[RMDB]
RNA sequence: GGGAACGACUCGAGUAGAGUCGAAAAAUGACACAUGCGCAAGGUGGUUAGGGUACAGCUUGGUUUUAUACAUUUUAGGGAGACAUGAGACAUCAGUCAACAUGUGUAAGAUGUACAUUGAUUCUAUCCAGAAAGGCAGGACAACUUGAAGCAAGGGAGUUAGCAUAGCAUUCGUGCUAUGCUAACUAAAAGAAACAACAACAACAAC
Reactivity to DMS in 0.01 (KOAc 150mM, MgCl2 10mM, bicine 150mM(pH8.5), 24C), signal-to-noise 3, nucleotides 027 to 156: a110u000g010a140c020a060c040a070u000g030c070g040c060a110a100g020g040u000g000g010u000u000a120g000g040g030u000a040c100a080g010c050u000u010g020g000u030u000u000u000a120u000a080c030a040u000u000u000u010a100g040g000g010a150g040a070c040a050u010g020a300g010a090c060a100u000c100a190g000u000c030a070a080c040a040u000g000u000g010u000a050a040g020a050u010g020u000a070c080a120u010u000g000a090u010u000c040u000a090u010c030c010a100g010a050a030a040g010g030c010a090g040g000a020c030a020a040c070u000u000g000a120a040g020c050a050a070g030g010g020
Reactivity to 2A3 in 0.01 (KOAc 150mM, MgCl2 10mM, bicine 150mM(pH8.5), 24C), signal-to-noise 5, nucleotides 027 to 156: a000u130g020a020c030a010c030a060u140g050c040g030c080a030a040g060g000u040g020g050u090u070a070g050g000g020u030a060c030a040g080c070u030u050g060g010u060u050u060u070a090u030a040c040a060u050u050u040u080a080g020g030g000a080g010a030c020a030u070g010a050g020a060c020a060u100c030a080g050u020c020a030a050c010a110u060g050u010g010u060a040a030g010a010u040g020u030a030c030a080u020u070g020a020u090u000c030u060a110u020c030c000a000g060a040a030a000g020g000c040a000g010g020a000c010a030a020c060u030u050g010a020a000g010c020a000a040g060g030g000
The record gives the reactivity of an RNA of 207 nucleotides to DMS and 2A3. It was measured as part of the RMDB library OK3TST. The reactions ran in a buffer of 150 mM KOAc, 10 mM MgCl2 and 150 mM bicine (pH 8.5), at 24 C. For 2A3, 4,419 sequencing reads were counted. 2A3 adducts were read by reverse transcription with SuperScript II with manganese. For DMS, 6,685 sequencing reads were counted.